RNA sequence: GGGAACGACUCGAGUAGAGUCGAAAAGAACAGGCAGUGAAGAGGUCGUGACUGACGUCCCAGCAGCAGGAGACAGGGAGUGUCAUUAUCAUUCCUGGUCUUCUCACAGUACUCUGAAUACAGAGAGUGAGGAAGAUUAGGGGGCCCUGUCUGCUGAUCACUUAAAGAACUUCGGUUCUUUAAGUGAAAAAGAAACAACAACAACAAC
Reactivity to 2A3 in 0.01 (KOAc 150mM, MgCl2 10mM, bicine 150mM(pH8.5), 24C), signal-to-noise 5, nucleotides 027 to 156: g040a050a010c040a060g040g020c020a030g040u060g120a090a050g050a070g060g070u040c040g040u070g050a060c030u020g030a050c020g040u030c010c010c010a010g000c010a000g000c010a000g010g100a030g000a030c000a000g000g010g000a080g050u150g120u120c090a100u060u260a090u200c070a070u060u120c000c000u000g010g000u000c000u000u000c010u000c000a010c000a010g070u140a170c010u010c000u020g060a190a070u260a150c010a000g000a000g010a000g000u010g000a040g040g100a030a020g000a010u020u030a030g010g000g000g030g010c000c000c000u000g000u010c000u010g010c000u010g000a020
Reactivity to DMS in 0.01 (KOAc 150mM, MgCl2 10mM, bicine 150mM(pH8.5), 24C), signal-to-noise 2, nucleotides 027 to 156: g020a090a080c030a050g000g000c020a070g010u010g020a060a110g020a120g030g020u000c020g020u010g020a100c040u000g000a130c000g010u000c010c010c020a230g020c100a100g030c030a090g010g010a070g000a020c010a050g030g010g020a170g050u000g030u010c090a090u000u010a100u000c050a120u000u010c010c000u000g010g000u000c010u000u000c000u000c000a030c030a080g000u010a180c000u000c010u000g000a180a170u000a160c030a020g000a020g010a210g000u000g000a080g010g000a030a030g010a050u000u000a060g040g010g030g010g000c020c010c020u000g000u000c010u010g010c000u020g040a160
Overview
This 207-nucleotide RNA was probed chemically with 2A3 and DMS. The reactions ran in a buffer of 150 mM KOAc, 10 mM MgCl2 and 150 mM bicine (pH 8.5), at 24 C. DMS adducts were read by reverse transcription with MarathonRT. For 2A3 the reverse transcriptase was SuperScript II with manganese.